RNA sequence: GGGAACGACUCGAGUAGAGUCGAAAAGGACAGCUUAUACAAUGUAGUAUCGCCUUGUUGUAGCCCGUUUCCAACAGAUAUGGUGAGGGGCGGUGGAAAAGCUGUAUUGUAGUGGUGGAUCGAUCCGGCCAGUCAUCCGUUUCGACGGAUGACUGGCAAAAGAAACAACAACAACAAC
Reactivity to 2A3 in 0.01 (KOAc 150mM, MgCl2 10mM, bicine 150mM(pH8.5), 24C), signal-to-noise 1, nucleotides 027 to 126: g000g000a000c070a050g000c010u080u020a060u010a130c070a000a000u140g020u060a010g060u000a000u020c120g030c000c000u020u050g220u300u180g200u300a050g100c000c000c070g040u090u110u000c050c010a010a010c000a040g130a080u090a040u250g030g030u000g000a140g000g000g000g000c020g000g000u030g020g000a000a000a180a160g020c020u030g000u110a050u000u060g000u000a000g000u130g100g020u000g110g000a120u130c030g000a000u000c000c000g020